[RMDB]
This 177-nucleotide RNA was probed chemically with DMS and 2A3. For DMS the reverse transcriptase was MarathonRT. Reactivities are given for positions 27 through 126. The DMS profile rests on 10,077 reads. For 2A3 the reverse transcriptase was SuperScript II with manganese. The RNA was probed in 150 mM KOAc, 10 mM MgCl2 and 150 mM bicine (pH 8.5) at 24 C.

RNA sequence: GGGAACGACUCGAGUAGAGUCGAAAAGAUAUGGAAGUGUACGCUGAUGACCGUGGGAUCGGAAACGAUCCGUAACAUCGCAAGGCGACACUUCCUAAGUCAAAAGUCACGACUUCGGUCGUGACAACGUACGUAUGAUGUUCGCAUCAUACGUACGAAAAGAAACAACAACAACAAC
Reactivity to DMS in 0.01 (KOAc 150mM, MgCl2 10mM, bicine 150mM(pH8.5), 24C), signal-to-noise 6, nucleotides 027 to 126: g010a020u000a120u010g000g000a010a010g010u000g010u000a120c010g020c000u010g000a080u010g000a040c300c130g000u000g010g010g000a020u000c000g010g000a040a020a060c010g010a010u000c000c000g010u010a060a110c110a090u000c070g020c120a090a140g000g010c000g000a070c000a010c000u000u000c000c000u000a010a050g000u010c010a080a080a100a140g000u010c000a010c000g000a020c000u000u020c230g010g000u000c000g010u010g000a000c000a020a040
Reactivity to 2A3 in 0.01 (KOAc 150mM, MgCl2 10mM, bicine 150mM(pH8.5), 24C), signal-to-noise 6, nucleotides 027 to 126: g010a010u020a000u040g000g020a000a010g010u040g010u110a300c000g000c000u060g030a300u110g060a130c060c090g030u070g120g000g000a010u020c000g000g000a000a000a010c000g000a000u000c000c010g010u080a020a030c010a060u200c080g030c260a120a210g010g000c000g010a000c000a010c010u010u000c000c000u000a010a000g000u000c020a040a020a050a130g000u000c000a000c020g000a010c010u040u070c300g110g000u000c000g000u000g000a000c000a010a000